[RMDB]
RNA sequence: GGGAACGACUCGAGUAGAGUCGAAAAGUUGCUCGUAUGGUUCUACGUUCUUACGCAGCAGUGCACGUACUGUCAUCCCCAUAUCGGCAAUGAGUUUUACCAGCUCCUCAUGUGAGGGCGGGGUCUCCUUACUACGCUUUUUCGAAAGCGUAGUAAGAAAAGAAACAACAACAACAAC
Reactivity to 2A3 in 0.01 (KOAc 150mM, MgCl2 10mM, bicine 150mM(pH8.5), 24C), signal-to-noise 7, nucleotides 027 to 126: g020u010u020g020c020u030c090g020u020a020u060g040g050u120u030c050u070a040c030g040u070u070c040u160u110a040c040g010c040a040g010c020a020g040u030g050c100a020c200g090u170a030c030u060g060u130c030a090u110c030c010c000c000a010u020a010u070c020g030g000c020a000a040u070g030a080g110u080u100u070u060a070c010c010a020g010c050u240c000c010u030c020a130u300g170u260g150a020g000g000g010c010g000g030g000g010u020c020u020c030
Reactivity to DMS in 0.01 (KOAc 150mM, MgCl2 10mM, bicine 150mM(pH8.5), 24C), signal-to-noise 9, nucleotides 027 to 126: g010u000u000g000c010u000c170g010u000a020u000g000g010u010u010c050u000a060c040g010u000u010c140u000u010a060c070g030c060a070g010c050a050g010u000g020c150a100c170g010u000a040c060u000g010u000c160a120u010c130c160c000c020a030u000a020u000c280g000g000c030a030a030u000g000a090g000u000u000u000u010a140c020c020a090g010c010u010c020c020u000c020a160u020g010u010g010a020g010g000g010c010g010g000g000g000u000c070u000c040
Structure probing data (2A3 and DMS) for a 177-nucleotide construct.
The RNA was probed in 150 mM KOAc, 10 mM MgCl2 and 150 mM bicine (pH 8.5) at 24 C.